RNA sequence: GGGAACGACUCGAGUAGAGUCGAAAACGAAGAUUCUGGGAUGUAGGAUUAGUUGAGCCUAUUUAUGGCCCUAAUGUGAACACUCAAAAUUAUUCACAGAUAGCAAUUGAUCUGAUAACUAAAAGUAGUAAUAAUCAGGUUUCGACCUGAUUAUUACAAAAGAAACAACAACAACAAC
Reactivity to DMS in 0.01 (KOAc 150mM, MgCl2 10mM, bicine 150mM(pH8.5), 24C), signal-to-noise 6, nucleotides 027 to 126: c160g000a050a040g000a040u000u000c020u010g010g000g010a090u000g010u000a230g010g010a030u000u000a010g000u010u010g010a170g020c010c000u010a130u010u010u010a090u010g010g010c000c070c010u010a010a020u000g010u010g000a060a300c260a050c030u000c040a010a010a020a020u000u000a100u000u000c020a140c030a020g000a040u010a060g000c100a060a100u020u020g000a010u000c010u010g010a150u000a070a140c080u000a030a070a050a120g000u010a110
Reactivity to 2A3 in 0.01 (KOAc 150mM, MgCl2 10mM, bicine 150mM(pH8.5), 24C), signal-to-noise 5, nucleotides 027 to 126: c050g010a020a010g010a030u040u010c020u050g000g000g090a120u020g020u030a030g030g060a010u020u000a010g060u050u130g030a020g000c000c010u080a160u080u270u060a170u170g000g010c000c000c010u020a020a030u210g090u020g300a050a020c010a010c030u030c000a040a050a000a030u100u070a190u100u030c030a020c000a060g060a060u060a020g060c100a130a180u100u110g010a010u040c010u030g040a070u060a180a070c020u120a050a120a040a060g120u200a030

An RNA of 177 nucleotides, treated with DMS and 2A3 and read out base by base.
The RNA was probed in 150 mM KOAc, 10 mM MgCl2 and 150 mM bicine (pH 8.5) at 24 C.
2A3 adducts were read by reverse transcription with SuperScript II with manganese.
The DMS profile rests on 5,876 reads.
For 2A3, 5,122 sequencing reads were counted.